[RMDB]
RNA sequence: GGGAACGACUCGAGUAGAGUCGAAAAACAUGGCGGUGACAUACACCGGAAAACCGUAGAGAUACGGUCCGCCUUGUAGUCGGUGUACAGGAGGUGCAAGCCUGUCGUCAGGUAAUGUCGUACGCUGAGAUAUUUUGUAAUUCGUUACAAAAUAUCUAAAAGAAACAACAACAACAAC
Reactivity to DMS in 0.01 (KOAc 150mM, MgCl2 10mM, bicine 150mM(pH8.5), 24C), signal-to-noise 2, nucleotides 027 to 126: a070c030a050u020g000g000c020g000g010u010g010a040c090a060u010a080c060a100c020c000g000g000a040a030a100a060c020c000g010u010a000g000a230g020a170u000a000c000g000g000u000c030c020g020c050c000u010u040g010u020a070g010u000c030g010g010u010g010u040a010c020a040g000g000a060g000g040u020g000c230a100a160g000c010c000u000g020u010c090g030u010c000a090g000g000u000a300a220u010g000u000c140g000u040a300c000g000c000u000g000
Reactivity to 2A3 in 0.01 (KOAc 150mM, MgCl2 10mM, bicine 150mM(pH8.5), 24C), signal-to-noise 4, nucleotides 027 to 126: a000c040a030u040g010g000c000g000g020u070g020a010c010a020u110a040c060a010c030c000g010g010a060a070a000a020c000c000g000u000a010g010a000g000a070u010a010c000g000g010u010c010c010g040c010c000u030u100g080u040a060g060u040c020g000g010u020g010u010a020c010a020g010g030a010g030g050u160g070c050a070a050g030c020c000u060g050u140c090g120u130c050a000g000g000u300a240a150u210g010u010c060g000u060a090c000g000c020u020g000

The data come from the RNA Mapping Database (RMDB), library OK1LIB. This 177-nucleotide RNA was probed chemically with DMS and 2A3. 2A3 adducts were read by reverse transcription with SuperScript II with manganese.